RNA sequence: GGGAACGACUCGAGUAGAGUCGAAAAGGUUUAGUGCCCUUAUCGGUUCCGGCCGAUCAGCAGACCGGGCUUCCAGACAGGGCCGGGUGGCAGAGGCCAGGCCGCACGCCCUGGAGCCGCGCCACCGGCUGCAGAUCCAGUUCGCUGGAUCUGCAGCAAAAGAAACAACAACAACAAC
Reactivity to DMS in 0.01 (KOAc 150mM, MgCl2 10mM, bicine 150mM(pH8.5), 24C), signal-to-noise 4, nucleotides 027 to 126: g000g010u000u010u030a070g020u040g000c020c000c010u010u030a210u000c020g000g000u010u030c050c060g000g010c010c020g000a060u000c150a110g000c120a090g000a070c020c010g000g000g000c200u010u030c010c030a090g010a100c300a070g020g000g000c040c030g010g020g020u010g000g020c010a080g010a140g010g020c010c010a030g000g000c070c110g000c120a040c110g010c200c010c000u030g010g020a120g010c000c000g000c300g000c000c000a020c040c000g000
Reactivity to 2A3 in 0.01 (KOAc 150mM, MgCl2 10mM, bicine 150mM(pH8.5), 24C), signal-to-noise 1, nucleotides 027 to 126: g140g000u090u120u140a140g010u140g080c030c010c000u010u020a060u060c040g030g000u080u050c020c020g010g010c030c010g060a120u110c100a020g140c030a020g050a100c010c000g010g050g010c050u150u000c030c020a050g010a050c070a040g030g030g010c000c060g050g010g000u010g000g020c020a030g040a130g190g000c000c010a000g000g000c040c040g050c050a070c070g030c010c010c000u020g040g030a070g090c000c000g010c010g000c000c000a020c010c000g010
Chemical mapping of a 177-nucleotide RNA with DMS and 2A3. For 2A3 the reverse transcriptase was SuperScript II with manganese. 2A3 is a SHAPE reagent: it acylates the 2'-hydroxyl of flexible nucleotides of all four kinds. DMS adducts were read by reverse transcription with MarathonRT. It was measured as part of the RMDB libraries RFM100 and RFMREP.